Structure probing data (DMS and 2A3) for a 177-nucleotide construct.

RNA sequence: GGGAACGACUCGAGUAGAGUCGAAAAGACGCCUGUGUGGCGAAGCGAGCAUGAGAUGGAGCCGCAAGAGAAGAUGAGAUAGAAGCGGCAGGAUAGCUUGCUCGCCAAAAGAUCCAUCUCACAGAGACACGCAUAUAAUCUUCGGAUUAUAUGCGUGAAAAGAAACAACAACAACAAC
Reactivity to DMS in 0.01 (KOAc 150mM, MgCl2 10mM, bicine 150mM(pH8.5), 24C), signal-to-noise 4, nucleotides 027 to 126: g000a070c070g020c030c010u020g010u030g040u010g000g010c010g000a070a110g000c010g010a010g010c000a090u000g030a010g000a030u000g000g020a080g020c020c010g050c000a080a120g000a110g010a120a140g010a150u030g010a140g020a210u020a140g010a170a230g000c030g020g000c020a030g010g010a060u020a040g000c000u000u000g000c000u020c000g000c000c020a010a010a090a050g000a090u010c020c020a040u000c000u010c000a070c150a050g000a150g010a210
Reactivity to 2A3 in 0.01 (KOAc 150mM, MgCl2 10mM, bicine 150mM(pH8.5), 24C), signal-to-noise 6, nucleotides 027 to 126: g110a010c100g080c020c000u080g030u050g090u170g090g010c010g020a030a000g000c000g010a000g010c050a050u150g010a030g000a050u030g010g060a020g000c000c000g000c030a050a010g110a000g030a270a060g120a140u260g080a070g060a120u170a110g120a170a020g000c000g010g010c000a010g100g120a100u100a070g020c000u000u010g010c000u000c000g000c000c000a020a080a000a040g050a040u000c010c000a010u000c000u000c010a080c020a050g070a010g010a040
2A3 is a SHAPE reagent: it acylates the 2'-hydroxyl of flexible nucleotides of all four kinds.